RNA sequence: GGGAACGACUCGAGUAGAGUCGAAAAGAGCAUUUAAAAGAGCCCUUGAACCUACAUCAAUGAUUGAAUCUUUUGUUCCGCUUUGAAUACUCUGGAACAAUGCCCUUGCAUUCUCUCCAUUACAAUGAGUCGCCAUAUGAUUCGUCAUAUGGCGACUAAAAGAAACAACAACAACAAC
Reactivity to 2A3 in 0.01 (KOAc 150mM, MgCl2 10mM, bicine 150mM(pH8.5), 24C), signal-to-noise 3, nucleotides 027 to 126: g100a000g000c050a090u000u050u250a010a040a010a030g130a020g030c010c040c000u020u010g110a090a060c030c010u100a140c100a130u090c060a000a140u060g060a100u110u090g030a100a020u040c030u060u050u040u040g030u050u000c040c000g000c020u120u110u160g120a110a040u200a220c030u070c100u150g020g020a060a000c020a000a040u090g000c020c000c000u020u100g000c010a040u100u040c020u000c000u010c040c040a050u130u140a040c080a000a170u100g050
Reactivity to DMS in 0.01 (KOAc 150mM, MgCl2 10mM, bicine 150mM(pH8.5), 24C), signal-to-noise 1, nucleotides 027 to 126: g040a120g050c070a060u030u050u140a040a120a110a070g000a030g040c000c010c040u000u030g000a110a040c040c000u030a070c150a100u030c140a240a060u030g010a040u000u000g040a110a100u000c180u000u000u010u090g020u000u000c000c020g030c050u020u020u080g060a070a160u000a000c120u000c000u010g000g000a090a040c080a110a020u000g000c160c000c040u000u040g010c120a040u000u050c000u000c080u030c030c010a000u030u000a120c260a110a170u030g030
Structure probing data (2A3 and DMS) for a 177-nucleotide construct. For DMS the reverse transcriptase was MarathonRT. The DMS profile rests on 1,092 reads. The data come from the RNA Mapping Database (RMDB), library OK1LIB. 2A3 adducts were read by reverse transcription with SuperScript II with manganese. The reactions ran in a buffer of 150 mM KOAc, 10 mM MgCl2 and 150 mM bicine (pH 8.5), at 24 C.